[RMDB]
RNA sequence: GGGAACGACUCGAGUAGAGUCGAAAAGAUAUGGACUGGUAAACGAAAUACCGGAGCCGAUAAGAUGCUGUCGGAAACGACAGGCAUCUUUUGACGGCUUGGUAUUUCGUUUACCAGUCCUAAGUCAGAGAUGACAUUAGUUCGCUAAUGUCAUCUCAAAAGAAACAACAACAACAAC
Reactivity to DMS in 0.01 (KOAc 150mM, MgCl2 10mM, bicine 150mM(pH8.5), 24C), signal-to-noise 1, nucleotides 027 to 126: g000a070u020a300u010g000g000a000c000u000g000g000u000a000a010a020c010g000a010a020a020u000a000c000c000g040g030a010g020c020c010g020a270u000a030a020g020a010u010g010c000u000g000u000c000g000g010a140a120a230c010g030a010c010a040g020g020c000a000u000c000u000u000u000u000g000a180c090g010g000c000u000u000g010g000u000a010u000u000u000c010g000u000u000u000a000c010c000a000g000u020c000c000u000a010a050g010u000c020a180